Structure probing data (DMS and 2A3) for a 207-nucleotide construct. In probing experiments dimethyl sulfate is read out at A N1 and C N3, which are open when not base-paired. DMS adducts were read by reverse transcription with MarathonRT. For 2A3, 946 sequencing reads were counted. 2A3 adducts were read by reverse transcription with SuperScript II with manganese.
RNA sequence: GGGAACGACUCGAGUAGAGUCGAAAACGCACUCGCAGCUAAAUAACCUGCGCUGAGCCCUUCUCCCCCAGCUUGCCUGUGUCCUAGGGAAUUGGAAGGUCAUCCUUCACAGGAUCGUGUGGAAGUCAUUACUCGUGAGUGUUCGCACUCACGAGAACCAAAGACAUCUGUUCGCAGAUGUCUUUGGAAAAGAAACAACAACAACAAC
Reactivity to DMS in 0.01 (KOAc 150mM, MgCl2 10mM, bicine 150mM(pH8.5), 24C), signal-to-noise 1, nucleotides 027 to 156: c050g000c000a070c050u000c000g030c110a090g000c040u000a000a170a160u000a160a100c110c000u020g020c000g040c050u000g000a120g020c000c010c040u010u010c030u000c010c020c020c040c020a050g020c030u010u000g020c050c020u010g040u000g030u000c020c020u000a070g030g010g030a070a130u010u010g010g020a050a070g000g000u000c030a060u000c010c020u000u010c080a110c020a090g060g000a090u000c060g000u000g000u030g050g000a090a250g000u000c040a190u000u020a210c020u000c030g060u000g080a020g000u000g010u030u030c300g050c000a030c030u020c000a000c000g020a050g000a020a070
Reactivity to 2A3 in 0.01 (KOAc 150mM, MgCl2 10mM, bicine 150mM(pH8.5), 24C), signal-to-noise 2, nucleotides 027 to 156: c020g050c010a030c030u000c020g000c010a040g000c090u140a030a120a130u100a100a110c010c000u000g000c000g020c160u050g040a050g000c000c000c000u110u060c050u080c000c000c000c070c000a000g030c000u030u080g040c020c000u020g000u000g040u000c010c000u030a060g060g040g020a090a110u080u020g060g020a020a030g000g000u060c020a030u070c020c000u030u010c000a020c020a040g080g000a040u030c080g020u060g030u040g110g010a040a040g000u030c050a120u060u140a070c000u000c010g000u000g000a000g000u000g020u040u070c140g050c080a000c020u010c000a000c000g000a000g010a000a000